Source: RMDB library OK2TRN, as collected in RNAgym. Chemical mapping of a 177-nucleotide RNA with 2A3 and DMS. The RNA was probed in 150 mM KOAc, 10 mM MgCl2 and 150 mM bicine (pH 8.5) at 24 C.
RNA sequence: GGGAACGACUCGAGUAGAGUCGAAAAAGCGGUUAAUAUUAUAGAUCAUGCAAAAAUUUUUGAUAGCCUAGAGGAUAGCAUUAAAGACCUCGAAUAUUUAUAUGCUACUACUUGCAUUAAAAGGGCAUAUACCUACUACGUUCGCGUAGUAGGUAUAAAAAGAAACAACAACAACAAC
Reactivity to 2A3 in 0.01 (KOAc 150mM, MgCl2 10mM, bicine 150mM(pH8.5), 24C), signal-to-noise 1, nucleotides 027 to 126: a000g030c040g070g000u060u030a010a130u130a280u200u220a280u110a100g010a000u030c010a000u010g040c040a080a030a120a300a290u190u180u130u190u140g070a070u070a070g020c030c010u010a040g000a000g120g000a020u010a040g020c030a010u100u140a220a000a000g060a090c000c000u060c020g030a040a000u030a090u110u070u000a070u000a010u170g000c010u000a070c010u010a040c040u090u070g020c000a090u030u160a000a220a150a070g000g000g000c010a000
Reactivity to DMS in 0.01 (KOAc 150mM, MgCl2 10mM, bicine 150mM(pH8.5), 24C), signal-to-noise 2, nucleotides 027 to 126: a130g040c070g000g000u000u010a070a080u030a060u030u020a120u000a180g000a060u000c060a060u000g000c020a000a030a060a130a100u000u000u000u000u010g000a080u000a080g030c000c090u010a100g000a130g000g010a270u000a030g010c000a010u000u000a000a080a060g000a120c260c080u010c150g010a050a100u010a030u000u010u000a010u010a020u020g000c000u000a020c040u000a120c060u000u000g000c060a060u000u000a010a010a050a100g010g000g040c020a120